[RMDB]
RNA sequence: GGGAACGACUCGAGUAGAGUCGAAAACGUUAAUGACAUUUGUAUGUUUGAGAAUAAAACCACUUUGCCUACUAAUAUAGCUUUUGAACUCUAUGCUAAGCGUGCUGUACGCUCGCAUCCCGAUUUCCAGCACGUCCGUUCGCGGACGUGAAAAGAAACAACAACAACAAC
Reactivity to 2A3 in 0.01 (KOAc 150mM, MgCl2 10mM, bicine 150mM(pH8.5), 24C), signal-to-noise 5, nucleotides 027 to 129: c060g030u050u100a100a040u180g070a030c030a080u010u030u110g070u060a100u090g040u030u110u130g080a070g020a090a070u210a090a100a030a030c000c030a010c000u010u020u020g010c000c020u020a050c020u020a090a060u100a060u010a090g010c000u090u000u000u050g060a070a020c000u000c060u080a070u140g020c020u050a060a020g000c010g010u000g000c020u070g050u100a010c020g000c040u020c020g000c000a070u010c010c000c000g080a130u030u040u020c000c000a000g040
Reactivity to DMS in 0.01 (KOAc 150mM, MgCl2 10mM, bicine 150mM(pH8.5), 24C), signal-to-noise 4, nucleotides 027 to 129: c080g010u050u030a080a130u070g020a050c000a090u030u040u020g040u040a020u020g040u010u030u030g010a160g060a210a070u050a030a000a000a000c040c070a040c080u000u000u000g000c080c060u020a080c110u030a050a100u020a080u040a070g000c000u060u000u000u030g010a070a050c030u060c050u000a050u050g040c070u010a090a150g030c060g010u010g010c000u040g000u030a080c160g000c000u000c150g070c010a000u020c060c040c010g020a000u040u040u000c080c090a150g030